[RMDB]
RNA sequence: GGGAACGACUCGAGUAGAGUCGAAAACACCUAGUUCCCUCUUUAUGAGGGCAGGUGAUAAGAGAGAAGUUACCCCAGGGAUAACUGAGUUGUCCUCGGUAAGAGUACACAUCGACCCGAGGGUUUGGUACAGUACGAAUUUCGAUUCGUACUGUACAAAAGAAACAACAACAACAAC
Reactivity to DMS in 0.01 (KOAc 150mM, MgCl2 10mM, bicine 150mM(pH8.5), 24C), signal-to-noise 7, nucleotides 027 to 126: c020a000c000c010u010a110g020u040u030c000c000c000u010c010u010u030u020a090u040g010a020g020g000g030c060a000g010g000u010g000a100u030a070a090g010a130g010a100g000a130a090g000u010u020a030c010c000c020c120a140g000g010g020a140u010a050a040c060u000g010a150g010u000u000g000u010c000c000u000c000g000g000u000a060a270g000a020g010u020a110c300a120c220a120u010c000g000a220c300c000c000g000a050g000g000g010u000u000u010g010
Reactivity to 2A3 in 0.01 (KOAc 150mM, MgCl2 10mM, bicine 150mM(pH8.5), 24C), signal-to-noise 9, nucleotides 027 to 126: c000a000c000c000u010a050g030u250u220c000c040c000u010c010u030u280u110a270u300g000a000g000g000g000c000a010g000g000u010g020a060u130a150a050g100a000g010a000g040a140a080g030u070u090a120c000c000c010c030a070g110g010g040a130u090a170a060c050u090g060a030g150u040u040g040u050c000c000u000c000g000g010u000a060a000g010a000g010u090a060c100a000c020a190u010c010g010a040c020c000c010g010a010g010g040g030u020u060u060g050